[RMDB]
RNA sequence: GGGAACGACUCGAGUAGAGUCGAAAACGGCACUCCCGUCAGCUUUGAUGGAAGCGCAGGGGCCAAAGAGCAGCCGUGCAGCGUGGUGCUGACAACAGUGGCUGCCAGGCUGGAGGAGCCUGCUGACGUGUUCUACUCCAUUCGUGGAGUAGAACACAAAAGAAACAACAACAACAAC
Reactivity to DMS in 0.01 (KOAc 150mM, MgCl2 10mM, bicine 150mM(pH8.5), 24C), signal-to-noise 3, nucleotides 027 to 126: c060g020g030c020a110c020u000c020c000c020g010u000c030a060g010c210u000u010u000g020a050u000g020g000a030a040g030c090g010c040a080g000g000g010g000c050c020a080a110a090g000a120g020c020a030g000c000c020g030u000g000c010a030g000c000g030u000g020g000u000g000c000u000g000a070c160a090a140c140a090g000u000g000g010c000u000g020c000c000a030g020g010c010u000g000g010a140g000g000a120g020c030c030u000g000c070u000g000a180c170
Reactivity to 2A3 in 0.01 (KOAc 150mM, MgCl2 10mM, bicine 150mM(pH8.5), 24C), signal-to-noise 3, nucleotides 027 to 126: c020g020g060c010a020c050u030c000c010c040g060u060c010a030g030c030u200u180u230g070a160u200g110g080a020a060g050c020g000c050a030g080g010g050g000c010c030a080a120a010g090a020g020c010a000g010c010c010g040u100g000c010a000g000c030g120u200g030g220u300g130c030u020g050a150c040a180a000c020a070g050u060g170g000c010u000g010c000c000a020g000g000c010u050g000g040a040g050g050a020g000c000c030u010g000c040u040g020a040c100